RNA sequence: GGGAACGACUCGAGUAGAGUCGAAAAGAUAUGGAUAUGGGAGACGCAAAUUUCCAUUCGGAAACGAAUGAGAAACUCGUACGUCUCUCCAUAUCCUAAGUCAAACGGCGAGCUUCGGCUCGCCGAAGUUCUUAAGUAGCUUCGGCUACUUAAGAACAAAAGAAACAACAACAACAAC
Reactivity to 2A3 in 0.01 (KOAc 150mM, MgCl2 10mM, bicine 150mM(pH8.5), 24C), signal-to-noise 1, nucleotides 027 to 126: g000a000u000a010u070g000g010a010u000a010u030g000g000g000a010g020a010c010g040c160a230a020a010u000u010u000c020c000a000u010u000c010g030g000a000a050a070c020g030a030a000u160g060a190g010a300a000a010c120u080c190g100u280a280c020g010u010c000u050c010u000c000c000a000u010a000u030c010c010u000a010a000g000u040c010a140a070a020c020g010g000c030g080a010g000c030u110u300c300g110g000c000u060c060g000c000c000g000a000a000
Reactivity to DMS in 0.01 (KOAc 150mM, MgCl2 10mM, bicine 150mM(pH8.5), 24C), signal-to-noise 1, nucleotides 027 to 126: g000a030u000a300u020g000g000a000u000a000u010g020g010g000a060g030a000c030g010c000a120a210a300u000u000u000c000c010a020u020u000c020g000g010a050a060a220c010g060a010a010u000g000a270g000a020a000a020c100u020c300g040u000a130c000g000u000c000u000c000u010c000c010a000u010a000u000c000c000u000a010a000g000u010c020a150a150a290c050g060g010c020g010a000g030c030u000u010c300g000g000c030u040c000g050c020c000g000a010a030
Source information:
Source: RMDB library TTRDES, as collected in RNAgym. This 177-nucleotide RNA was probed chemically with 2A3 and DMS. In probing experiments dimethyl sulfate is read out at A N1 and C N3, which are open when not base-paired. For DMS, 696 sequencing reads were counted. Conditions: 150 mM KOAc, 10 mM MgCl2 and 150 mM bicine (pH 8.5), 24 C.